[RMDB]
RNA sequence: GGGAACGACUCGAGUAGAGUCGAAAACCGCUACUCUUCGGAGUAGCGGAUACAUCUCGGGUCCGGGCCUUACGGUAGGACCAACGGUAAGGCCAGAGAUGAAGGGAGAGAUUUUCGAAUCUCUCAAUUUCAGUCAGGAAUUCGUUCCUGACUGAAAAAAAGAAACAACAACAACAAC
Reactivity to 2A3 in 0.01 (KOAc 150mM, MgCl2 10mM, bicine 150mM(pH8.5), 24C), signal-to-noise 2, nucleotides 027 to 126: c000c000g000c000u010a000c000u000c000u030u120c280g120g010a010g000u000a000g000c000g000g000a000u000a030c010a020u000c000u000c000g110g040g020u030c030c000g070g050g000c000c010u020u000a030c070g120g000u050a050g060g240a070c050c010a010a010c020g070g000u010a000a000g000g010c000c040a010g000a000g000a040u040g070a050a100g150g080g020a010g000a010g010a010u000u030u040u110c180g080a080a010u010c000u000c000u000c010a000a010
Reactivity to DMS in 0.01 (KOAc 150mM, MgCl2 10mM, bicine 150mM(pH8.5), 24C), signal-to-noise 2, nucleotides 027 to 126: c000c000g010c000u010a000c000u000c000u000u020c170g030g010a000g020u000a000g010c000g010g000a040u010a040c060a030u000c020u010c000g010g020g010u010c040c050g010g000g000c000c000u000u000a000c000g000g020u000a030g030g010a150c220c150a040a010c010g000g030u000a030a010g020g010c010c000a110g000a030g010a040u000g000a220a110g010g010g000a010g000a010g010a030u010u000u010u010c140g000a020a010u010c010u000c010u000c000a050a040